Conditions: 150 mM KOAc, 10 mM MgCl2 and 150 mM bicine (pH 8.5), 24 C. The record gives the reactivity of an RNA of 177 nucleotides to 2A3 and DMS. For 2A3 the reverse transcriptase was SuperScript II with manganese. For DMS the reverse transcriptase was MarathonRT. For 2A3, 2,313 sequencing reads were counted. Source: RMDB library VIROID, as collected in RNAgym.

RNA sequence: GGGAACGACUCGAGUAGAGUCGAAAAGAGGGGUGGGCCUGCGGGCGCGAGGAAGGACACCCGAAGAAAGGAAGGGUGAAAACCCUGUUUCGGCGGGAAUUACUCCUGUCGGCCGCUGGGCACUCCCGAUCAAUCCAUUGUUCGCAAUGGAUUGAUCAAAAGAAACAACAACAACAAC
Reactivity to 2A3 in 0.01 (KOAc 150mM, MgCl2 10mM, bicine 150mM(pH8.5), 24C), signal-to-noise 1, nucleotides 027 to 126: g140a060g000g000g000g050u050g020g050g200c010c020u000g020c000g020g040g010c040g000c030g050a020g040g000a100a100g010g020a020c020a020c010c000c000g000a010a000g030a020a010a000g130g190a040a030g000g010g000u000g000a020a010a010a010c000c010c010u010g060u000u000u000c020g000g000c000g000g000g020a000a080u120u080a070c000u000c000c000u050g090u060c010g020g070c000c020g000c020u030g000g010g000c000a000c010u000c030c000c010
Reactivity to DMS in 0.01 (KOAc 150mM, MgCl2 10mM, bicine 150mM(pH8.5), 24C), signal-to-noise 1, nucleotides 027 to 126: g020a070g010g010g000g000u010g010g000g000c040c030u010g030c030g020g000g020c020g010c070g000a100g000g020a030a020g020g000a160c300a030c000c000c000g020a050a010g000a050a040a050g000g010a090a020g020g010g010u020g000a080a040a100a040c010c000c000u000g010u000u000u000c000g020g000c020g000g000g000a040a070u010u000a180c050u000c010c010u000g000u000c010g000g000c010c010g010c050u000g000g000g020c040a040c020u000c010c000c040